[RMDB]
Notes
Conditions: 150 mM KOAc, 10 mM MgCl2 and 150 mM bicine (pH 8.5), 24 C. Chemical mapping of a 207-nucleotide RNA with 2A3 and DMS. DMS adducts were read by reverse transcription with MarathonRT. For 2A3 the reverse transcriptase was SuperScript II with manganese.
RNA sequence: GGGAACGACUCGAGUAGAGUCGAAAACUAAUUUAUCCACUCCGAUUGCGGCAAAGUUGGUGACGAAAAGUACGUUAACUGGGAAGAACUUUCAUCUACAUGACUUUUGACGUUAUUACUUGCGAUGUUGGCCAAGAUCACAGAGUAGAGAAUGUCACCCUCAGGAAAAUUUCGAUUUUCCUGAGGGAAAAGAAACAACAACAACAAC
Reactivity to 2A3 in 0.01 (KOAc 150mM, MgCl2 10mM, bicine 150mM(pH8.5), 24C), signal-to-noise 3, nucleotides 027 to 156: c000u050a070a130u080u050u190a110u020c000c000a040c010u030c040c040g050a060u000u070g000c060g000g020c020a050a060a100g030u080u050g040g000u040g000a010c010g010a110a010a010a010g020u080a020c050g010u020u070a100a050c040u070g010g030g030a110a060g020a110a000c040u010u110u190c070a080u030c000u040a080c020a100u090g050a060c000u030u010u070u070g040a020c020g020u000u040a090u100u080a080c050u080u060g010c030g040a020u070g020u130u070g000g010c030c000a070a010g000a060u030c010a020c060a040g040a020g020u070a020g020a010g000a060a060u050g010u000c000a020
Reactivity to DMS in 0.01 (KOAc 150mM, MgCl2 10mM, bicine 150mM(pH8.5), 24C), signal-to-noise 2, nucleotides 027 to 156: c040u000a090a080u000u010u010a110u030c010c000a090c040u010c000c070g000a110u000u010g020c220g000g020c020a070a080a150g030u000u000g020g000u030g010a110c040g000a040a050a060a050g040u000a050c050g030u000u000a040a130c080u020g040g000g030a130a130g040a090a130c060u000u000u000c040a090u000c050u000a080c040a090u000g000a060c010u020u000u030u020g010a040c060g010u000u000a080u000u000a070c060u000u020g000c060g020a090u000g030u000u010g060g020c060c030a050a220g010a090u010c060a110c050a070g010a040g030u020a070g000a130g020a070a070u000g010u000c050a130